[RMDB]
The data come from the RNA Mapping Database (RMDB), library TTRDEL. Chemical mapping of a 177-nucleotide RNA with 2A3 and DMS. Conditions: 150 mM KOAc, 10 mM MgCl2 and 150 mM bicine (pH 8.5), 24 C. The DMS profile rests on 9,577 reads. Reactivities are given for positions 27 through 126. DMS adducts were read by reverse transcription with MarathonRT. For 2A3 the reverse transcriptase was SuperScript II with manganese.

RNA sequence: GGGAACGACUCGAGUAGAGUCGAAAAGAUAUGGAUAGGACGUUGAAACCAUCGUGUCGGAAACGACAUUGGUGGAGUCCGUCCUAAGUCGGACUGACAUGUCUAGAUUCGUCUAGACAUGUCAGAACAUCCAAGGUAACUUCGGUUACCUUGGAUGAAAAGAAACAACAACAACAAC
Reactivity to 2A3 in 0.01 (KOAc 150mM, MgCl2 10mM, bicine 150mM(pH8.5), 24C), signal-to-noise 7, nucleotides 027 to 126: g040a040u180a060u240g070g020a040u090a300g050g000a010c060g050u200u290g100a130a080a060c020c000a000u020c030g010u000g010u000c000g000g040a060a060a060c010g030a010c000a010u150u300g020g000u000g000g000a030g000u000c000c010g000u010c000c010u020a070a010g070u030c050g050g040a060c000u000g000a000c000a000u000g010u000c000u000a000g010a040u040u100c200g020u010c210u000a000g010a000c000a000u000g000u000c010a000g000a000a010
Reactivity to DMS in 0.01 (KOAc 150mM, MgCl2 10mM, bicine 150mM(pH8.5), 24C), signal-to-noise 5, nucleotides 027 to 126: g000a110u010a230u000g010g000a070u000a020g020g000a010c010g020u000u010g000a080a080a120c000c000a000u000c020g020u000g000u000c000g000g010a130a100a210c000g010a010c000a020u000u020g080g000u010g000g000a060g010u000c010c000g000u000c000c000u010a010a070g000u000c020g000g000a220c000u000g000a010c000a000u000g000u000c000u000a000g000a040u000u010c190g020u000c000u000a000g010a010c000a000u000g000u000c000a000g000a070a190